[RMDB]
The record gives the reactivity of an RNA of 177 nucleotides to DMS and 2A3. For DMS the reverse transcriptase was MarathonRT. The 2A3 profile rests on 2,190 reads. The reactions ran in a buffer of 150 mM KOAc, 10 mM MgCl2 and 150 mM bicine (pH 8.5), at 24 C.
RNA sequence: GGGAACGACUCGAGUAGAGUCGAAAAGAUAUGGAUGUGAACUACUCGUCGAAGAGCGAUGAAAUCGGAAACGAUGGAGCUCCGAAGCCGAGCACAUCCUAAGUCAAAAGGCAUCUUCGGAUGCCAACUCACUUUUCAACUUCGGUUGAAAAGUGAGAAAAGAAACAACAACAACAAC
Reactivity to DMS in 0.01 (KOAc 150mM, MgCl2 10mM, bicine 150mM(pH8.5), 24C), signal-to-noise 1, nucleotides 027 to 126: g000a050u000a300u000g010g000a040u000g010u000g000a060a030c050u000a300c000u000c020g050u000c010g000a220a020g000a020g050c050g090a130u000g050a120a130a010u000c000g000g070a190a060a180c000g000a000u000g000g000a060g010c000u020c000c020g020a140a210g000c180c010g000a000g000c020a020c000a040u000c000c000u010a010a110g000u000c050a030a120a120a110g050g030c000a000u000c000u020u010c140g010g000a000u000g000c000c000a030a050
Reactivity to 2A3 in 0.01 (KOAc 150mM, MgCl2 10mM, bicine 150mM(pH8.5), 24C), signal-to-noise 1, nucleotides 027 to 126: g010a000u060a050u110g010g020a020u020g010u000g020a030a030c020u150a090c000u230c020g020u030c050g010a080a030g000a020g030c020g190a290u040g000a080a030a020u030c010g010g000a070a020a040c000g000a020u010g000g050a010g020c000u040c030c020g030a030a000g000c060c000g000a000g000c010a000c000a010u000c030c000u010a080a000g030u010c050a090a000a080a100g010g040c000a000u000c000u040u120c300g110g000a000u000g020c000c000a000a000